Structure probing data (2A3 and DMS) for a 177-nucleotide construct.
The RNA was probed in 150 mM KOAc, 10 mM MgCl2 and 150 mM bicine (pH 8.5) at 24 C.
The data come from the RNA Mapping Database (RMDB), library OK2TST.
For DMS, 1,312 sequencing reads were counted.
RNA sequence: GGGAACGACUCGAGUAGAGUCGAAAAUUGUGCCGCAAAGCAAGUAGCGGUGAGUGUCUUGACGAAUGGUACUACGCCACUUGUUGGUGAGCUGGGUAGUAAAACAUGUCGGCAGAUCCGUAUGCCACCCAUUUACGGGGUUCGCCCCGUAAAUGGGAAAAGAAACAACAACAACAAC
Reactivity to 2A3 in 0.01 (KOAc 150mM, MgCl2 10mM, bicine 150mM(pH8.5), 24C), signal-to-noise 1, nucleotides 027 to 126: u080u020g050u090g030c020c010g090c140a170a070a010g020c040a040a020g030u090a020g090c020g030g010u030g040a060g130u090g000u000c040u060u110g040a000c010g120a050a040u020g040g020u010a000c010u010a010c070g170c010c000a020c020u020u070g060u100u210g150g050u240g030a000g030c150u040g030g000g000u020a030g030u030a010a110a000a060c050a010u040g010u080c000g010g000c000a000g030a060u040c030c000g030u020a070u120g020c010c010a120
Reactivity to DMS in 0.01 (KOAc 150mM, MgCl2 10mM, bicine 150mM(pH8.5), 24C), signal-to-noise 2, nucleotides 027 to 126: u000u000g000u010g010c020c030g010c140a080a140a070g000c100a040a130g010u010a130g010c000g000g010u010g010a210g000u020g000u000c010u000u000g030a050c070g010a060a050u000g000g020u050a020c020u000a060c010g000c010c000a020c050u000u000g030u000u010g030g000u000g020a030g000c300u000g010g010g030u000a000g020u010a020a010a110a170c050a020u000g000u000c060g000g000c010a010g000a060u000c020c030g000u000a020u000g010c000c110a160